[RMDB]
RNA sequence: GGGAACGACUCGAGUAGAGUCGAAAAUUCAGAGUUGACCCCUUCAACGCUAGAGGAAGACCUCAGGAGCGUGGAAGUGGCCCAAGAUCUCAAUCUGCUAACCCCAGAGGCACUAACAAUCAGCCAAGGAAACGCGACCAGUCCGCACCUGCUGCGGUAUCAGUCCUCAAUUCGUUGAGGACUGAUAAAAAGAAACAACAACAACAAC
Reactivity to 2A3 in 0.01 (KOAc 150mM, MgCl2 10mM, bicine 150mM(pH8.5), 24C), signal-to-noise 2, nucleotides 027 to 156: u070u030c020a020g020a000g110u080u150g080a110c010c000c010c010u040u010c010a030a020c000g000c000u000a030g000a000g050g050a160a160g140a300c000c010u000c060a060g230g140a030g010c000g000u000g070g000a020a000g000u060g060g010c020c180c090a050a080g060a190u020c020u000c030a080a050u060c010u070g060c000u010a080a140c000c000c000c040a030g030a020g050g030c030a000c050u150a230a040c100a070a100u080c020a020g000c020c000a030a000g080g000a040a080a010c050g000c020g040a040c000c040a010g020u030c010c000g000c010a020c000c150u100g070c060u010g010c020g010g000
Reactivity to DMS in 0.01 (KOAc 150mM, MgCl2 10mM, bicine 150mM(pH8.5), 24C), signal-to-noise 1, nucleotides 027 to 156: u000u010c110a160g000a120g040u000u000g000a150c000c000c040c020u010u010c020a030a030c030g020c000u040a110g020a040g060g030a080a300g030a300c000c020u000c040a070g030g040a170g020c000g050u020g010g020a060a060g030u000g010g010c000c010c050a110a020g010a110u000c030u020c100a060a170u010c040u020g000c010u000a040a100c050c030c030c010a250g000a230g010g000c020a060c020u000a120a080c100a090a110u000c050a100g000c000c000a080a220g040g000a060a030a050c090g000c090g010a000c040c010a110g030u010c030c000g000c030a100c040c140u000g000c030u000g010c030g040g000